Chemical mapping of a 177-nucleotide RNA with 2A3. High 2A3 reactivity points to a flexible backbone, as in loops and unpaired stretches. The RNA was probed in 150 mM KOAc, 10 mM MgCl2 and 150 mM bicine (pH 8.5) at 24 C. It was measured as part of the RMDB library TTRDES.
[RMDB]
RNA sequence: GGGAACGACUCGAGUAGAGUCGAAAAGAUAUGGAGUAAUUCCUUCAACAGCCGUACAAUCGGAAACGAUUGGCGGACAUGAAGGAUUACUCCUAAGUCAAAAGAGUUAAGGUUCGCCUUAACUCAACGUCGCUGAAAAGUUCGCUUUUCAGCGACGAAAAGAAACAACAACAACAAC
Reactivity to 2A3 in 0.01 (KOAc 150mM, MgCl2 10mM, bicine 150mM(pH8.5), 24C), signal-to-noise 1, nucleotides 027 to 126: g010a000u020a010u060g010g000a000g010u010a060a040u300u300c040c070u000u060c110a300a240c050a230g060c010c000g060u220a300c090a040a040u010c000g000g030a000a000a000c030g010a010u010u010g070g000c060g000g010a010c020a300u300g000a000a010g000g000a000u000u000a000c000u000c010c000u020a000a020g040u020c040a000a000a050a210g000a000g000u000u000a010a000g060g030u040u290c300g160c010c000u010u010a000a010c010u000c020a020a000